[RMDB]
RNA sequence: GGGAACGACUCGAGUAGAGUCGAAAAAUACUUCUCAGGAUGCCGCGUUGCAGUCCAACAAGAUCCAGGGACUGUACAGAAUUUUCCUAUACCUCGAGUCGGGUUUGGAAUCUAAGGUUGACUCGCUAAAACUUUACGUGGUUCGCCACGUAAAGAAGUAUCCUAAUUCGUUCGCGAAUUAGGAUACAAAAGAAACAACAACAACAAC
Reactivity to DMS in 0.01 (KOAc 150mM, MgCl2 10mM, bicine 150mM(pH8.5), 24C), signal-to-noise 1, nucleotides 027 to 156: a160u010a060c020u000u000c000u000c000a210g070g000a140u000g070c010c050g010c080g060u020u010g000c060a070g000u020c000c000a070a290c040a120a170g030a080u010c060c050a190g010g000g010a050c050u000g000u000a190c030a130g030a050a060u010u000u010u010c000c050u000a080u000a030c060c030u030c030g020a050g060u010c020g020g010g020u000u000u000g010g000a050a060u010c010u000a100a080g020g020u000u000g000a040c070u000c040g000c050u000a060a080a120a210c000u010u000u000a000c000g020u020g000g000u010u010c300g020c010c020a010c000g010u000a010a010a020g000a030a120
Reactivity to 2A3 in 0.01 (KOAc 150mM, MgCl2 10mM, bicine 150mM(pH8.5), 24C), signal-to-noise 3, nucleotides 027 to 156: a000u110a050c030u060u020c020u010c030a020g080g020a100u120g030c010c020g070c090g120u090u080g000c020a000g000u000c020c000a060a050c040a120a120g070a140u060c060c050a040g000g010g020a000c010u000g000u020a010c010a020g200a200a080u030u040u000u050c010c000u050a040u080a120c000c010u020c050g000a000g020u020c010g000g000g000u040u060u020g020g020a040a020u020c030u100a180a060g090g030u110u150g040a020c010u020c020g000c030u100a090a080a030a090c000u010u000u000a000c000g000u000g010g000u000u050c110g020c060c000a000c000g010u000a000a000a000g000a010a000
Chemical mapping of a 207-nucleotide RNA with DMS and 2A3.
Reactivities are given for positions 27 through 156.
DMS adducts were read by reverse transcription with MarathonRT.
The reactions ran in a buffer of 150 mM KOAc, 10 mM MgCl2 and 150 mM bicine (pH 8.5), at 24 C.
It was measured as part of the RMDB library M2RFPK.